[RMDB]
RNA sequence: GGGAACGACUCGAGUAGAGUCGAAAAAGCGACCAGCGAGUACGCUCGCUGGUCGCAAGCUAUCAACAUCCCCGCCGGUUGGGCGCGGCGUUUCUACUAAACCCGCGUAGUGAACCGGCUGUAGCAAACACUCUGUACGAUUCGUCGUACAGAGUGUAAAAGAAACAACAACAACAAC
Reactivity to DMS in 0.01 (KOAc 150mM, MgCl2 10mM, bicine 150mM(pH8.5), 24C), signal-to-noise 1, nucleotides 027 to 126: a060g070c000g040a060c000c020a000g020c030g100a060g060u030a050c250g010c000u000c000g060c030u000g000g090u000c000g070c000a010a000g000c050u000a030u000c100a120a130c210a140u000c010c000c000c220g030c000c000g000g000u000u000g000g000g050c000g000c010g000g000c200g000u000u000u020c290u020a140c160u070a100a000a020c030c030c000g000c010g000u000a030g000u020g110a030a070c000c000g010g000c010u020g010u020a000g020c040a210a100
Reactivity to 2A3 in 0.01 (KOAc 150mM, MgCl2 10mM, bicine 150mM(pH8.5), 24C), signal-to-noise 2, nucleotides 027 to 126: a010g010c000g000a070c010c000a040g000c000g080a000g030u060a090c300g080c150u000c030g000c000u010g010g000u000c000g040c020a000a000g000c020u030a020u130c020a060a000c010a110u070c010c000c010c000g020c000c010g000g070u030u050g050g050g000c030g020c030g020g000c180g030u000u030u060c240u210a300c050u180a050a030a010c000c000c000g000c040g000u080a130g160u040g300a010a010c000c000g000g000c000u020g000u010a000g000c000a030a080